Source: RMDB library OK2TST, as collected in RNAgym. Chemical mapping of a 177-nucleotide RNA with 2A3 and DMS. High 2A3 reactivity points to a flexible backbone, as in loops and unpaired stretches. 2A3 adducts were read by reverse transcription with SuperScript II with manganese.
[RMDB]
RNA sequence: GGGAACGACUCGAGUAGAGUCGAAAACACUCACAUAGCAAAUCUCUGGAGGUCUCUGAUUGGGCCUGUUCAGGCCACAUGGUCCACUCUUGGCUCAGUCACUGUAAACAAUGGGAUGGGAGAUGGACUAAUUAGUAGCGUUCGCGCUACUAAUUAGAAAAGAAACAACAACAACAAC
Reactivity to 2A3 in 0.01 (KOAc 150mM, MgCl2 10mM, bicine 150mM(pH8.5), 24C), signal-to-noise 5, nucleotides 027 to 126: c030a020c010u050c010a080c010a100u180a030g070c030a030a120a180u050c030u020c030u090g120g100a100g050g110u060c020u010c020u090g070a080u020u070g020g010g000c010c020u020g020u170u150c090a040g020g030c020c010a110c040a100u290g000g000u010c020c010a030c020u040c020u110u140g010g000c000u010c030a000g030u040c020a030c070u070g060u270a090a140a030c030a070a090u100g010g010g010a020u050g060g020g010a100g010a070u030g020g010a000
Reactivity to DMS in 0.01 (KOAc 150mM, MgCl2 10mM, bicine 150mM(pH8.5), 24C), signal-to-noise 7, nucleotides 027 to 126: c100a140c060u000c030a100c100a070u010a080g020c050a080a140a080u000c040u000c020u000g000g020a140g000g010u000c030u000c060u000g010a090u010u000g010g000g020c010c000u010g000u000u010c160a090g010g010c030c030a110c150a070u010g020g020u000c010c030a080c070u000c030u000u000g010g020c020u000c010a030g010u000c080a050c120u000g010u010a080a070a060c120a070a100u000g000g000g000a050u000g000g010g010a050g000a110u000g010g010a150